Source: RMDB library M2PK90, as collected in RNAgym. An RNA of 177 nucleotides, treated with 2A3 and DMS and read out base by base. DMS adducts were read by reverse transcription with MarathonRT. The reactions ran in a buffer of 150 mM KOAc, 10 mM MgCl2 and 150 mM bicine (pH 8.5), at 24 C.

RNA sequence: GGGAACGACUCGAGUAGAGUCGAAAAUUUAAGAGCGUAGAAGUCUCUGUCACGAUACGAGUAAGUGACUCUCGUGUACUACUGACGAAUGAGACAGAGACAUUUAUGCUCAGUGUCAGUCAAGGAAAGUACCAGUUUGGUUCGCCAAACUGGUACUAAAAGAAACAACAACAACAAC
Reactivity to 2A3 in 0.01 (KOAc 150mM, MgCl2 10mM, bicine 150mM(pH8.5), 24C), signal-to-noise 2, nucleotides 027 to 126: u090u060u080a150a030g010a000g040c010g000u000a000g000a050a000g000u000c000u020c000u000g010u000c010a000c050g030a030u060a050c030g000a000g000u020a180a100g040u090g270a030c000u000c010u010c050g150u140g020u060a080c000u030a040c020u050g170a090c020g080a060a080u120g020a000g000a060c020a010g000a000g000a000c000a000u000u020u000a000u000g000c010u000c010a000g010u030g070u040c060a060g020u060c040a070a030g170g000a230a140
Reactivity to DMS in 0.01 (KOAc 150mM, MgCl2 10mM, bicine 150mM(pH8.5), 24C), signal-to-noise 2, nucleotides 027 to 126: u020u000u000a130a120g000a010g010c000g020u000a010g020a010a050g020u010c000u000c000u000g000u000c000a090c050g000a110u010a070c030g000a080g020u000a030a070g030u000g000a070c090u010c170u010c150g010u020g000u000a060c040u010a080c060u000g040a120c050g000a100a080u010g000a110g000a000c000a000g010a000g010a020c000a040u010u000u010a030u000g000c010u000c000a070g000u000g000u000c070a070g000u000c090a050a130g010g000a080a070